[RMDB]
RNA sequence: GGGAACGACUCGAGUAGAGUCGAAAAGUUACGUUCGCGUAACAAAAAGAUAUGGACGUUAGAACUACUUGUCAGCUCGUAAUCUGAUCGGAAACGAUCAGUACAACGAGCUUGGAUUUAGCUAACGUCCUAAGUCAAAAACGGGGUUCGCCCCGAAGACUAAUACGUGGUUCGCCACGUAUUAGUCAAAAGAAACAACAACAACAAC
Reactivity to DMS in 0.01 (KOAc 150mM, MgCl2 10mM, bicine 150mM(pH8.5), 24C), signal-to-noise 1, nucleotides 027 to 156: g030u000u020a000c010g010u000u020c280g070c030g000u000a000a030c040a040a070a170a130a160g000a080u000a280u010g010g000a010c000g000u000u000a090g000a050a130c020u000a000c030u000u020g020u000c070a180g000c000u020c000g030u000a190a260u000c000u000g000a010u020c000g030g000a090a120a260c000g010a000u010c000a050g000u000a040c050a230a020c000g000a020g040c000u000u030g050g000a000u000u000u000a020g000c010u000a030a000c020g000u000c010c020u010a010a020g010u000c040a040a050a060a190a030c080g000g000g040g020u000u010c150g000c020c000c000c030g000a010a040
Reactivity to 2A3 in 0.01 (KOAc 150mM, MgCl2 10mM, bicine 150mM(pH8.5), 24C), signal-to-noise 4, nucleotides 027 to 156: g010u010u000a000c010g010u020u100c260g000c010g090u010a010a010c100a020a140a040a000a000g060a040u090a040u080g000g000a000c000g000u010u000a010g040a210a170c020u050a020c020u090u080g210u300c010a000g010c000u000c010g000u020a060a100u040c000u010g010a000u010c010g020g020a070a060a090c000g000a000u000c000a010g000u010a010c050a060a020c000g010a010g000c000u000u020g000g020a000u020u010u050a000g010c000u010a000a000c050g000u010c000c000u000a010a000g000u000c010a020a020a100a020a080c020g010g000g000g000u050u060c190g200c000c000c020c000g000a040a030
Conditions: 150 mM KOAc, 10 mM MgCl2 and 150 mM bicine (pH 8.5), 24 C. An RNA of 207 nucleotides, treated with DMS and 2A3 and read out base by base. The 2A3 profile rests on 4,834 reads. High DMS reactivity at an A or C suggests that its Watson-Crick edge is free. DMS adducts were read by reverse transcription with MarathonRT.